About this RNA:
The record gives the reactivity of an RNA of 177 nucleotides to 2A3. The 2A3 profile rests on 467 reads. The RNA was probed in 150 mM KOAc, 10 mM MgCl2 and 150 mM bicine (pH 8.5) at 24 C.

RNA sequence: GGGAACGACUCGAGUAGAGUCGAAAAAAACAGACCAAAGCAUCAAGCAAGAAGUUUCCUGGCAAUAAACUAAGCACAGCAUUAUUUUUUAAGGAACACAAAUUAAGUGUUCAACCUGUGGCAAAUUCAUGGGGAAUUACUUCGGUAAUUCCCCAUGAAAAGAAACAACAACAACAAC
Reactivity to 2A3 in 0.01 (KOAc 150mM, MgCl2 10mM, bicine 150mM(pH8.5), 24C), signal-to-noise 1, nucleotides 027 to 126: a000a000a000c000a090g090a020c050c120a000a090a040g000c000a000u240c070a110a000g060c000a050a000g010a040a000g100u000u170u000c000c000u070g090g000c050a230a000u090a170a000a080c120u070a240a000g000c000a000c000a000g000c000a010u000u100a280u030u300u000u000u000u160a160a000g130g060a090a000c000a000c000a000a300a000u170u300a200a040g000u000g000u000u000c010a000a080c000c000u040g040u040g050g000c020a010a000a000u000u000